[RMDB]
RNA sequence: GGGAACGACUCGAGUAGAGUCGAAAAAGAAGAGCUCCCUCCUCCGGAGAGAGAAGACCAUAGCGAUAGGGGGAGAUGCUAGGAGUAGGAGGCGACCGAAGCGAGGGGGAAAGUAAAGAAAGCAACGUAACGCGGCACUUCGGUGCCGCGAAAAGAAACAACAACAACAAC
Reactivity to DMS in 0.01 (KOAc 150mM, MgCl2 10mM, bicine 150mM(pH8.5), 24C), signal-to-noise 2, nucleotides 027 to 129: a110g060a180a120g010a000g090c040u000c070c000c030u000c060c030u080c140c180g080g000a090g000a010g070a050g000a160a060g070a130c090c110a090u000a090g070c000g020a250u020a050g080g000g000g000g070a070g000a080u000g000c160u000a070g010g000a000g040u000a110g070g020a090g050g010c120g070a010c020c000g020a080a050g000c150g000a030g010g000g000g010g000a050a000a060g000u070a000a070a070g040a110a000a040g040c080a080a040c100g020u060a240a120
Reactivity to 2A3 in 0.01 (KOAc 150mM, MgCl2 10mM, bicine 150mM(pH8.5), 24C), signal-to-noise 1, nucleotides 027 to 129: a010g020a040a010g020a000g000c000u060c000c000c000u020c040c000u080c030c000g180g000a070g000a000g000a000g010a060a000g050a010c020c000a140u120a000g160c180g100a000u040a110g000g000g000g020g000a000g000a000u080g090c000u060a040g010g030a000g000u010a110g000g000a000g000g000c020g000a000c000c080g050a000a000g010c030g000a100g030g040g000g010g000a030a030a030g000u050a030a000a000g000a000a020a000g070c140a030a000c010g100u050a020a020
Source information: The record gives the reactivity of an RNA of 170 nucleotides to DMS and 2A3. Conditions: 150 mM KOAc, 10 mM MgCl2 and 150 mM bicine (pH 8.5), 24 C.